[RMDB]
Source information: An RNA of 207 nucleotides, treated with DMS and 2A3 and read out base by base. Conditions: 150 mM KOAc, 10 mM MgCl2 and 150 mM bicine (pH 8.5), 24 C. Values cover nucleotides 27 to 156.
RNA sequence: GGGAACGACUCGAGUAGAGUCGAAAAGAGGCGAAAUAAUUCCCAUCUCCUAUGUACGGCCGGAGAUGGGUUUGGCCGUACUAAUAAGCCUCAUAGUGACGAGAGUCACGAAUUCUGGAUAGCCUCUGGUAGUCGGCUAUCCUUUGACUACCGUAGAAUAGUACGUGCAUUUCGAUGCACGUACUAUAAAAGAAACAACAACAACAAC
Reactivity to DMS in 0.01 (KOAc 150mM, MgCl2 10mM, bicine 150mM(pH8.5), 24C), signal-to-noise 1, nucleotides 027 to 156: g000a040g060g060c030g020a070a120a080u000a090a170u040u000c020c010c000a120u000c040u010c000c010u010a160u000g000u000a020c000g040g060c040c050g020g000a060g040a110u000g020g030g010u000u000u000g040g010c000c010g000u000a130c000u000a110a110u000a090a140g020c010c020u000c020a140u000a120g000u000g000a080c000g010a200g010a300g000u000c000a050c010g000a080a080u000u000c040u010g000g000a140u000a060g000c010c030u000c090u010g030g020u000a010g040u000c110g000g030c070u010a090u000c060c000u000u020u030g030a050c030u000a020c030c030g000u020a090g000a150
Reactivity to 2A3 in 0.01 (KOAc 150mM, MgCl2 10mM, bicine 150mM(pH8.5), 24C), signal-to-noise 1, nucleotides 027 to 156: g020a000g000g000c000g070a030a010a150u140a070a100u090u070c040c000c000a020u020c010u000c020c010u120a100u110g030u000a030c000g000g000c000c000g070g020a020g010a080u300g080g000g000u070u040u060g000g000c000c000g000u020a000c010u000a010a080u050a020a000g000c000c000u010c010a030u090a010g000u030g000a000c010g020a010g020a020g110u000c020a000c000g010a020a040u220u020c020u060g000g010a020u000a000g030c000c000u060c080u050g110g000u050a070g020u050c000g000g040c020u010a000u010c000c020u030u060u040g010a000c000u030a080c030c030g090u020a000g070a120